[RMDB]
RNA sequence: GGGAACGACUCGAGUAGAGUCGAAAAGUGCAUACCUACUUCUGAGCUGCAUCAUACGUAUGGCUCAUGUGCUGAGUCGUGUGCCGUGUGACGCUUUCUCAAAAGCGCGCCGUUAUGAUGUCACGUCCCAGGUCAUUUAUUUCGAUAAAUGACCUGGAAAAGAAACAACAACAACAAC
Reactivity to DMS in 0.01 (KOAc 150mM, MgCl2 10mM, bicine 150mM(pH8.5), 24C), signal-to-noise 4, nucleotides 027 to 126: g000u010g000c110a090u000a060c070c020u010a080c120u010u020c050u000g030a100g000c230u010g000c000a020u000c000a030u020a040c070g000u010a040u020g020g000c000u000c010a000u040g010u040g030c100u020g000a080g000u020c000g050u010g020u010g010c140c070g020u040g010u000g010a080c020g000c020u000u000u020c260u030c300a050a050a020a000g020c010g020c010g000c020c010g000u030u010a010u000g000a020u000g000u030c040a050c100g000u010c140
Reactivity to 2A3 in 0.01 (KOAc 150mM, MgCl2 10mM, bicine 150mM(pH8.5), 24C), signal-to-noise 8, nucleotides 027 to 126: g080u080g010c030a060u070a160c020c020u060a080c060u100u110c080u100g070a040g040c060u030g000c030a000u000c000a010u030a040c020g060u110a050u160g020g000c010u020c040a020u130g090u050g100c140u090g030a030g070u060c010g000u020g020u030g050c020c040g080u100g010u020g060a110c010g000c000u040u060u020c200u020c060a120a150a000a000g000c000g000c000g000c010c000g020u040u010a020u020g030a020u020g090u110c040a020c090g040u050c000